An RNA of 170 nucleotides, treated with DMS and 2A3 and read out base by base. It was measured as part of the RMDB library 15KLIB. High 2A3 reactivity points to a flexible backbone, as in loops and unpaired stretches. The reactions ran in a buffer of 150 mM KOAc, 10 mM MgCl2 and 150 mM bicine (pH 8.5), at 24 C.
RNA sequence: GGGAACGACUCGAGUAGAGUCGAAAACCCUCUCCCGUUCGGGAAAAGGGGGACUCCGGAACUCCCUGCAGGCUGGGGACGAAGCCCCCACCGGGCGCUCCCCUCGGCGGGCCGUCCAUUGGGUUCAAAGGCUACCACUUCGGUGGUAGCAAAAGAAACAACAACAACAAC
Reactivity to DMS in 0.01 (KOAc 150mM, MgCl2 10mM, bicine 150mM(pH8.5), 24C), signal-to-noise 3, nucleotides 027 to 129: c050c030c000u060c110u000c000c000c000g050u070u040c000g000g050g000a040a000a060a120g000g000g000g010g000a070c070u040c060c000g060g020a070a090c100u030c000c030c000u040g040c150a120g040g050c080u010g050g000g020g000a060c000g050a130a100g010c050c030c000c020c070a130c000c000g020g050g020c080g040c050u030c030c030c020c010u050c170g020g030c080g020g030g020c300c010g010u010c000c070a000u000u070g020g000g040u050u010c080a040a140a110g000
Reactivity to 2A3 in 0.01 (KOAc 150mM, MgCl2 10mM, bicine 150mM(pH8.5), 24C), signal-to-noise 5, nucleotides 027 to 129: c000c010c000u010c000u010c000c000c000g170u240u200c170g010g010g030a040a050a010a040g030g000g000g030g050a090c020u020c030c020g030g030a050a030c010u080c000c020c010u050g020c040a070g050g070c050u070g020g000g000g000a010c030g090a060a010g010c000c010c000c010c010a030c000c010g020g000g000c050g050c040u040c000c000c000c000u020c000g030g000c000g000g000g000c010c010g020u040c000c020a100u090u150g060g000g000u030u030c010a020a030a040g100

2A3 adducts were read by reverse transcription with SuperScript II with manganese.